The record gives the reactivity of an RNA of 177 nucleotides to DMS and 2A3. Values are in units of 0.01, from 0 to 300, in steps of 10. For DMS the reverse transcriptase was MarathonRT. For DMS, 15,801 sequencing reads were counted. Conditions: 150 mM KOAc, 10 mM MgCl2 and 150 mM bicine (pH 8.5), 24 C. 2A3 is a SHAPE reagent: it acylates the 2'-hydroxyl of flexible nucleotides of all four kinds.
[RMDB]
RNA sequence: GGGAACGACUCGAGUAGAGUCGAAAAGAGUAACCAACAAUGUGAUCUUGCUUACGGAGGCAAGACUUGCACAGUAUCAAAUCUGCAAGUAGUGCUAUUGUUGGAAAGAAUACUGUGAAGUCAACAAACUAUAUGACCCUUUCGAGGGUCAUAUAGUAAAAGAAACAACAACAACAAC
Reactivity to DMS in 0.01 (KOAc 150mM, MgCl2 10mM, bicine 150mM(pH8.5), 24C), signal-to-noise 7, nucleotides 027 to 126: g000a090g000u030a070a150c020c010a020a020c030a020a010u000g000u000g000a130u030c020u000u000g010c010u000u000a190c250g010g020a120g020g000c020a020a000g010a030c000u000u010g000c010a020c190a080g030u020a220u050c220a070a130a080u030c230u000g000c000a000a020g010u020a090g010u040g010c040u010a030u000u000g000u000u000g000g000a090a050a060g010a120a080u020a040c060u010g000u030g000a100a080g000u000c050a050a080c240a060a070
Reactivity to 2A3 in 0.01 (KOAc 150mM, MgCl2 10mM, bicine 150mM(pH8.5), 24C), signal-to-noise 8, nucleotides 027 to 126: g110a010g040u080a060a050c020c000a000a020c010a010a020u080g030u060g130a050u020c000u010u000g020c000u080u090a110c140g300g300a040g060g020c030a030a000g010a010c000u000u020g000c000a050c020a060g050u060a050u210c040a060a070a080u050c020u020g000c000a020a010g020u090a020g050u080g160c020u050a000u020u010g010u010u030g010g010a040a020a010g050a050a040u070a090c030u020g030u030g130a060a020g060u050c010a020a020c040a090a200